[RMDB]
Structure probing data (2A3 and DMS) for a 207-nucleotide construct. 2A3 adducts were read by reverse transcription with SuperScript II with manganese.

RNA sequence: GGGAACGACUCGAGUAGAGUCGAAAACGCUGGGUAGAGGCACGAAUUAUCUCUGACUGCGAGCUUACUGAAGCGCGCACGGUAAGCGAUGAGCAGUCUAGAGCCGAGAUUCGUGCCUCUACCUGUGCUGAAGCGCGCACGGCAACCGAAAGGUGCGGAUAUAAUCAAGGUUCGCCUUGAUUAUAUCAAAAGAAACAACAACAACAAC
Reactivity to 2A3 in 0.01 (KOAc 150mM, MgCl2 10mM, bicine 150mM(pH8.5), 24C), signal-to-noise 1, nucleotides 027 to 156: c000g000c040u040g020g030g000u000a010g010a010g000g000c000a000c010g000a000a030u240u080a290u190c000u010c020u010g020a010c010u000g010c010g060a070g030c000u000u000a020c000u010g010a170a130g000c010g040c010g030c000a020c000g000g010u000a000a000g000c000g170a250u100g070a060g010c000a000g040u000c050u040a000g000a000g070c070c060g300a300g060a070u030u010c000g000u010g000c000c000u000c000u000a000c000c000u000g010u010g000c000u060g040a030a020g000c000g000c000g000c000a000c000g000g000c010a050a080c010c000g100a100a020a040g030g010u030g000c030g040
Reactivity to DMS in 0.01 (KOAc 150mM, MgCl2 10mM, bicine 150mM(pH8.5), 24C), signal-to-noise 2, nucleotides 027 to 156: c080g050c010u000g000g010g020u000a000g020a040g000g020c000a020c010g030a080a060u000u000a090u000c000u010c010u000g000a030c010u000g000c040g000a040g030c010u000u000a030c010u000g000a050a050g020c000g040c040g010c000a300c020g030g000u000a020a000g040c000g020a140u010g000a300g010c000a030g020u000c010u000a010g000a010g010c210c110g000a190g010a070u000u010c010g010u010g020c010c010u000c000u000a000c000c010u000g010u000g000c000u000g000a100a070g030c020g030c000g030c000a300c010g000g000c020a070a120c020c010g000a130a140a190g020g040u000g030c000g000